[RMDB]
RNA sequence: GGGAACGACUCGAGUAGAGUCGAAAAGGCAGGAAUAGAAUGGGCCGAAUCUAGGGUGACACUUCAGGCCAAAAGCUAUUUUUGUUUGGCACAAGGCCUGGUGGCUGAAACGGCGGUGUUCAACAAGCAAUAUUAAAAUUUUCGAAUUUUAAUAUUGAAAAGAAACAACAACAACAAC
Reactivity to DMS in 0.01 (KOAc 150mM, MgCl2 10mM, bicine 150mM(pH8.5), 24C), signal-to-noise 7, nucleotides 027 to 126: g010g020c030a040g000g010a090a070u020a060g000a080a070u010g000g010g040c000c020g000a050a120u020c060u020a080g020g010g020u010g010a090c040a040c040u010u060c040a030g010g020c000c000a020a060a150a110g000c010u000a020u020u020u050u020u030g010u030u010u010g000g010c000a030c120a130a180g010g000c010c000u000g010g010u000g000g010c030u000g010a030a040a160c070g010g010c030g010g010u000g000u000u000c040a060a080c150a090a080g010
Reactivity to 2A3 in 0.01 (KOAc 150mM, MgCl2 10mM, bicine 150mM(pH8.5), 24C), signal-to-noise 4, nucleotides 027 to 126: g040g000c020a020g030g090a060a080u090a140g030a050a050u110g010g030g000c000c000g000a010a010u020c010u040a030g020g000g010u030g020a010c000a000c000u070u030c010a020g010g000c000c000a020a250a010a000g010c010u040a190u060u120u050u060u150g220u080u110u090g020g000c010a040c020a050a040g010g000c000c000u010g000g000u010g000g000c030u040g000a020a050a010c010g000g010c010g000g020u040g010u050u060c040a030a030c020a070a000g050